[RMDB]
RNA sequence: GGGAACGACUCGAGUAGAGUCGAAAAGAUAUGGAUCCACUGAGCCUUGGAUUUAUAGGCAAGAUGAGUGAUAUAUCGGAAACGAUAUAUCAUUGAGCCUAUUGUCAGGCUCUGUGGAUCCUAAGUCCAAUUCUGAGUACUUCGGUACUCAGAAUUGAAAAGAAACAACAACAACAAC
Reactivity to 2A3 in 0.01 (KOAc 150mM, MgCl2 10mM, bicine 150mM(pH8.5), 24C), signal-to-noise 3, nucleotides 027 to 126: g090a030u110a100u300g000g000a010u040c000c010a020c050u060g010a000g030c040c040u080u260g060g000a000u060u300u120a020u080a010g020g010c070a030a060g300a270u300g140a030g080u010g030a000u010a000u010a010u010c020g010g030a000a140a010c000g010a000u000a000u000a010u050c000a000u020u050g010a000g010c020c020u020a010u010u010g020u000c060a060g010g010c040u010c000u010g000u000g000g010a000u000c000c010u000a000a000g030u000c000
Reactivity to DMS in 0.01 (KOAc 150mM, MgCl2 10mM, bicine 150mM(pH8.5), 24C), signal-to-noise 2, nucleotides 027 to 126: g020a120u000a300u010g000g000a020u010c000c010a000c000u010g010a010g010c010c010u010u020g020g010a040u000u010u000a010u000a010g000g020c000a130a250g020a230u000g020a180g010u000g020a010u000a000u000a000u000c000g010g000a140a100a210c010g000a020u000a000u000a000u010c010a000u000u000g010a300g000c010c000u010a000u000u000g000u000c010a050g000g010c000u000c000u000g010u000g000g000a000u000c000c000u000a010a100g010u000c030
Structure probing data (2A3 and DMS) for a 177-nucleotide construct. The RNA was probed in 150 mM KOAc, 10 mM MgCl2 and 150 mM bicine (pH 8.5) at 24 C.